RNA sequence: GGGAACGACUCGAGUAGAGUCGAAAACCAAUGGGAAACCAUUGGCAACUCGGAAACGAGUUGAACUCGGAAUUAGCUAUGAAACGAGCGACAAUGCGAUUUUAAGCAUUGUCGAUUACGCCCAUGUCGAUUUUAAGACAUGGAGCGAACAUAGCAAGCAUCGUGCAGCGUUCGCGCUGUAUGAUGCAAAAGAAACAACAACAACAAC
Reactivity to DMS in 0.01 (KOAc 150mM, MgCl2 10mM, bicine 150mM(pH8.5), 24C), signal-to-noise 4, nucleotides 027 to 156: c000c010a000a020u010g030g000g000a220a100a290c000c010a010u000u000g000g020c010a020a030c000u000c010g020g000a150a150a200c020g020a010g030u000u010g010a060a300c030u000c040g010g010a180a130u000u000a130g010c010u000a010u000g020a090a090a110c160g000a080g010c000g000a020c000a000a000u000g010c000g000a270u000u000u010u010a120a300g000c000a010u000u000g010u000c000g000a020u000u010a080c010g030c000c000c000a010u000g010u000c000g000a280u000u000u000u000a100a190g010a010c000a010u000g020g010a060g030c020g020a030a180c010a010u010a010g010c000a100a300
Reactivity to 2A3 in 0.01 (KOAc 150mM, MgCl2 10mM, bicine 150mM(pH8.5), 24C), signal-to-noise 8, nucleotides 027 to 156: c000c000a000a000u010g000g000g010a050a030a020c000c000a010u000u000g000g000c000a000a000c000u000c000g010g030a060a060a040c000g000a000g000u000u000g010a050a030c000u000c010g020g020a170a060u110u040a090g000c000u000a000u000g020a050a060a020c030g010a020g020c000g010a000c000a000a000u000g010c030g130a190u020u100u090u300a120a000g000c000a000u000u000g000u000c000g000a000u000u010a020c000g000c000c000c000a000u000g000u000c020g030a100u030u070u090u300a120a020g000a000c000a000u000g000g010a020g000c000g000a010a000c010a000u000a000g000c010a010a010
Structure probing data (DMS and 2A3) for a 207-nucleotide construct. The data come from the RNA Mapping Database (RMDB), library OK3TST. The RNA was probed in 150 mM KOAc, 10 mM MgCl2 and 150 mM bicine (pH 8.5) at 24 C. The 2A3 profile rests on 13,831 reads.